An RNA of 207 nucleotides, treated with 2A3 and read out base by base. The data come from the RNA Mapping Database (RMDB), library M2RFPK. 2A3 is a SHAPE reagent: it acylates the 2'-hydroxyl of flexible nucleotides of all four kinds. The 2A3 profile rests on 960 reads.

[RMDB]
RNA sequence: GGGAACGACUCGAGUAGAGUCGAAAAGCCGAUCAAUUGCCGAGAAGCCUGGCUCGAAAUCGUCGACGCAUCGACGACGGUCCUGCCAUGAGACCGUAACGAGGACAUGUCGCCUCGAAUGGCGUCGUAUAACAUGAGUGGUUCGCCACUCAUGUAACUUCGAUCUACGUUUCGACGUAGAUCGAAGAAAAGAAACAACAACAACAAC
Reactivity to 2A3 in 0.01 (KOAc 150mM, MgCl2 10mM, bicine 150mM(pH8.5), 24C), signal-to-noise 1, nucleotides 027 to 156: g050c020c000g000a000u020c010a120a100u120u120g030c000c030g050a020g040a030a060g050c060c040u090g020g000c030u020c000g080a120a080a020u020c000g050u010c000g000a030c050g030c140a120u090c010g000a000c000g000a000c000g000g000u000c000c010u040g000c040c000a040u090g020a030g020a090c020c000g000u120a010a000c020g000a000g000g000a000c020a080u180g060u080c090g040c000c010u000c000g000a000a030u040g000g090c010g010u030c030g010u030a130u010a260a000c000a000u020g000a000g000u000g050g000u060u020c120g030c040c000a010c010u020c040a000u000g000u000a000a000